[RMDB]
RNA sequence: GGGAACGACUCGAGUAGAGUCGAAAAAUAAAGCUAGAGAAGUGGGUCGAAGUGGGGCGUAAAGCAAGGACGGUCCAAGGGCGAGUCGACCUCUCCAUCGGCACGAGGACGUGCCUGGUUUUGAGUGGGGGAGGAUGUUACGGACAAAUUCCGUAACCCACAACAUAGUCUUCGGACUAUGUUGUGGAAAAGAAACAACAACAACAAC
Reactivity to 2A3 in 0.01 (KOAc 150mM, MgCl2 10mM, bicine 150mM(pH8.5), 24C), signal-to-noise 1, nucleotides 027 to 156: a000u130a000a100a000g020c030u030a000g000a000g010a280a130g060u060g000g020g060u020c050g010a060a040g010u090g040g020g050g000c030g060u170a180a200a030g020c020a060a100g070g020a010c070g040g110u000c010c020a080a050g010g000g060c020g010a020g010u020c020g020a050c000c020u000c010u000c000c000a030u060c010g000g020c000a000c010g060a230g130g110a090c100g020u000g020c000c000u020g130g000u000u010u090u110g070a070g020u000g000g000g000g000g000a020g000g030a000u030g000u010u010a000c000g000g000a030c060a080a070a090u240u010c000c000g000u000a010a000c000